[RMDB]
This 207-nucleotide RNA was probed chemically with 2A3. For 2A3 the reverse transcriptase was SuperScript II with manganese. The 2A3 profile rests on 1,010 reads.
RNA sequence: GGGAACGACUCGAGUAGAGUCGAAAAGAAACUCGUGUCGCGUUGGCUGCCUAAUUCAAGGAAUUAGCGUGCCUUCAUGCUAAGGGUUUGAUAUCUGCUAAAACCCGGUGCAUUCAUCAAUGCAGGUCUCAUCCAAAUGCCUUCGGGCAUUUGGAAACGGACAGUCAUCAUUCGUGAUGACUGUCCGAAAAGAAACAACAACAACAAC
Reactivity to 2A3 in 0.01 (KOAc 150mM, MgCl2 10mM, bicine 150mM(pH8.5), 24C), signal-to-noise 1, nucleotides 027 to 156: g060a010a070a010c010u010c000g020u020g000u030c020g000c060g000u000u010g000g030c030u110g020c080c040u030a020a020u020u080c160a300a210g120g010a120a000u020u010a010g050c060g040u050g000c010c000u000u010c060a010u030g000c020u050a040a040g010g000g010u000u000u030g000a000u000a010u000c000u000g020c000u010a000a060a000a000c000c000c000g000g000u060g010c000a040u030u080c010a080u040c080a180a200u180g000c000a000g020g010u010c030u090c030a120u040c020c010a010a000a000u000g000c010c000u050u050c120g110g010g000c020a010u000u000u020g000g000a020a030a000